Structure probing data (2A3 and DMS) for a 177-nucleotide construct. 2A3 adducts were read by reverse transcription with SuperScript II with manganese. DMS adducts were read by reverse transcription with MarathonRT. The reactions ran in a buffer of 150 mM KOAc, 10 mM MgCl2 and 150 mM bicine (pH 8.5), at 24 C.
[RMDB]
RNA sequence: GGGAACGACUCGAGUAGAGUCGAAAAUCUUGCAGGUUCGCCUGCAAGAAAAUAGAAACAUGUAAAGGGGCAGUCCCCUAGCCCCACUCAAAAGGGGGAUAAAAAGAGCGGUCUUCGGACCGCUCAAGUACAUAAUGUCGUUCGCGACAUUAUGUACAAAAGAAACAACAACAACAAC
Reactivity to 2A3 in 0.01 (KOAc 150mM, MgCl2 10mM, bicine 150mM(pH8.5), 24C), signal-to-noise 2, nucleotides 027 to 126: u010c000u010u010g000c000a010g010g010u030u120c100g130c050c000u000g020c000a000a000g000a010a000a000a000u100a010g120a010a160a020c060a090u140g060u300a090a160a150g010g000g000g000c010a030g120u030c020c000c000c000u000a000g000c000c000c010c030a040c010u030c000a000a040a000a010g010g000g000g000g020a010u130a010a130a020a010a010g000a000g000c020g000g000u010c010u040u070c200g070g000a000c000c000g000c010u020c000a000a000
Reactivity to DMS in 0.01 (KOAc 150mM, MgCl2 10mM, bicine 150mM(pH8.5), 24C), signal-to-noise 2, nucleotides 027 to 126: u000c000u010u000g010c000a030g000g010u000u000c240g010c030c010u000g000c000a000a010g000a040a010a090a110u010a170g020a160a090a130c140a060u010g020u000a070a080a230g030g040g000g030c000a120g000u000c000c000c000c010u000a120g000c020c000c000c010a120c090u010c080a010a000a060a080g040g010g000g000g000a050u010a010a060a020a130a070g010a010g020c000g010g020u000c010u010u000c240g000g010a020c000c010g010c010u020c000a010a040